[RMDB]
RNA sequence: GGGAACGACUCGAGUAGAGUCGAAAACGAGGCGCGCCGCGGCAGCCCCGAGGAGAGCGGGCGGGGGCACCGGUACCGGCCGGGGACGGGUGAAACAGGAUGAUCCCGCCGAGACCGCCGGCCGCGCAUAGACGUGGUAGUUCGCUACCACGUCUAUAAAAGAAACAACAACAACAAC
Reactivity to 2A3 in 0.01 (KOAc 150mM, MgCl2 10mM, bicine 150mM(pH8.5), 24C), signal-to-noise 2, nucleotides 027 to 126: c030g000a050g000g090c000g000c000g010c000c010g000c000g030g000c030a030g040c020c000c000c000g020a030g120g020a050g020a000g020c030g000g040g020c030g010g000g010g020g000c070a060c020c000g030g000u040a130c030c010g060g030c000c030g000g000g000g000a050c030g040g040g010u050g080a070a090a020c060a070g150g060a140u050g010a000u090c010c000c000g000c000c000g000a050g060a130c010c000g000c000c000g030g000c070c020g010c020g000c000
Reactivity to DMS in 0.01 (KOAc 150mM, MgCl2 10mM, bicine 150mM(pH8.5), 24C), signal-to-noise 2, nucleotides 027 to 126: c100g000a160g000g000c020g000c020g000c070c010g020c040g010g000c020a150g000c040c000c000c060g000a130g020g000a190g000a100g010c020g010g010g020c100g040g010g000g000g020c000a100c020c000g000g020u000a100c080c000g010g000c050c000g000g000g000g000a080c060g010g020g000u000g000a100a100a090c160a150g010g030a060u030g000a130u000c000c000c000g040c040c000g000a110g070a090c040c000g000c100c050g000g010c070c030g020c010g000c090